[RMDB]
RNA sequence: GGGAACGACUCGAGUAGAGUCGAAAAUGAGAAGUCGUCAGUAGUUCGACGUGAGCAGAAGCCCGCCUCGAUAUGCUAUGUGGACGAGGGCAUGCCCAAGACACACCUUAACCCUUGCGGGACGCAAAGGGGUAUAGACUUUCGAGUCUAUACCCCUAAAAGAAACAACAACAACAAC
Reactivity to 2A3 in 0.01 (KOAc 150mM, MgCl2 10mM, bicine 150mM(pH8.5), 24C), signal-to-noise 1, nucleotides 027 to 126: u190g010a060g040a180a050g070u050c030g010u000c020a080g040u070a040g030u140u070c010g020a020c010g030u020g010a040g000c020a010g000a300a020g060c010c000c000g020c000c000u060c020g030a050u030a030u300g030c000u050a030u130g300u070g250g000a090c040g030a060g020g020g000c020a000u070g010c050c000c000a000a030g060a000c050a010c010a010c030c030u060u070a030a080c020c000c020u000u050g030c040g050g000g020a030c020g000c070a080a120
Reactivity to DMS in 0.01 (KOAc 150mM, MgCl2 10mM, bicine 150mM(pH8.5), 24C), signal-to-noise 4, nucleotides 027 to 126: u010g010a070g000a110a120g000u010c010g010u000c030a080g010u000a070g000u000u010c030g010a030c140g010u000g010a070g000c010a120g010a150a180g010c010c010c030g010c030c010u000c050g010a110u010a060u000g000c040u000a060u000g010u000g020g010a060c060g000a170g010g010g010c050a050u000g010c020c010c030a070a150g010a060c050a050c080a040c090c040u000u000a070a100c030c000c020u000u010g010c060g000g000g010a060c120g010c110a050a070